[RMDB]
Structure probing data (DMS and 2A3) for a 207-nucleotide construct. Reactivities are rounded to 0.1 and cut off at 0 and 3. 2A3 adducts were read by reverse transcription with SuperScript II with manganese. High DMS reactivity at an A or C suggests that its Watson-Crick edge is free.
RNA sequence: GGGAACGACUCGAGUAGAGUCGAAAAUCCUAAGUCAGCUCGAAGAACGUAGGGACAACCUGGAGGGAGCAAAUCGGAAACGAUUUGCAUCGAUCUCCAGGCUAAUCCCUACGGGAGAGCUGAUAUGGAAAAAGGGACUAAGUUCGCUUAGUCCCAACACUGUAGAACCGUUCGCGGUUCUACAGUGAAAAGAAACAACAACAACAAC
Reactivity to DMS in 0.01 (KOAc 150mM, MgCl2 10mM, bicine 150mM(pH8.5), 24C), signal-to-noise 1, nucleotides 027 to 156: u000c000c010u000a000a170g000u000c000a040g040c000u000c000g020a210a160g010a240a250c020g060u000a000g030g020g050a100c020a070a020c010c000u000g000g010a060g000g000g010a020g020c010a020a000a010u010c010g020g000a070a040a210c000g000a020u010u010u020g030c040a170u000c110g030a050u000c000u000c000c000a000g000g000c020u000a080a030u000c000c010c010u000a010c000g040g040g000a080g000a000g030c010u000g020a010u000a010u010g020g000a010a060a060a220a140g010g040g020a010c020u010a020a030g010u000u000c290g000c010u000u000a020g000u000c010c010c000a010a030
Reactivity to 2A3 in 0.01 (KOAc 150mM, MgCl2 10mM, bicine 150mM(pH8.5), 24C), signal-to-noise 2, nucleotides 027 to 156: u000c000c000u000a000a010g010u000c000a000g000c000u010c020g180a300a010g010a010a000c000g000u000a010g020g010g010a010c010a020a010c000c000u010g010g000a000g000g000g000a010g000c010a000a000a000u010c000g000g020a010a000a010c000g000a000u010u000u010g010c000a030u300c000g000a000u000c000u000c000c000a000g020g000c000u000a000a020u000c000c000c000u000a000c000g000g000g000a010g000a000g000c000u010g000a000u000a000u000g000g030a030a040a030a120a150g000g000g000a000c000u000a010a000g010u040u140c170g060c100u000u010a000g000u000c000c000c000a000a000